An RNA of 177 nucleotides, treated with DMS and 2A3 and read out base by base. The reactions ran in a buffer of 150 mM KOAc, 10 mM MgCl2 and 150 mM bicine (pH 8.5), at 24 C.

[RMDB]
RNA sequence: GGGAACGACUCGAGUAGAGUCGAAAAGAUAGUGGGGACGGCAGAGGUGGUGCAUAUUGGGCCUGGCACACGGUUCCACGGUGCUGAGCUUGAGGGGUUUGGUGUUAUUUGCGGGCUCACCAUCACAAUUAUGCACAAACUUCGGUUUGUGCAUAAUAAAAGAAACAACAACAACAAC
Reactivity to DMS in 0.01 (KOAc 150mM, MgCl2 10mM, bicine 150mM(pH8.5), 24C), signal-to-noise 3, nucleotides 027 to 126: g000a140u010a110g020u000g010g000g010g010a100c150g000g000c080a080g010a080g000g020u000g010g010u010g030c150a050u000a140u010u010g010g000g010c000c030u000g010g030c030a030c040a050c070g000g010u010u010c100c070a100c070g010g040u000g000c030u010g030a080g010c040u010u010g020a090g010g000g010g010u000u010u000g020g010u000g000u000u010a130u000u010u010g000c080g000g010g030c070u000c010a040c050c020a060u000c080a090c210a100
Reactivity to 2A3 in 0.01 (KOAc 150mM, MgCl2 10mM, bicine 150mM(pH8.5), 24C), signal-to-noise 1, nucleotides 027 to 126: g080a070u220a040g100u080g010g010g030g010a060c030g040g080c020a020g040a030g170g000u040g000g010u050g000c070a060u030a120u270u070g040g010g000c020c040u040g040g030c030a020c020a040c080g070g030u280u140c150c010a070c030g010g000u050g020c000u030g010a010g000c000u000u000g040a000g070g000g000g000u060u120u130g090g000u080g030u070u080a160u040u080u120g030c040g010g010g060c000u040c000a000c000c000a030u020c020a010c000a100
Values cover nucleotides 27 to 126.
For DMS the reverse transcriptase was MarathonRT.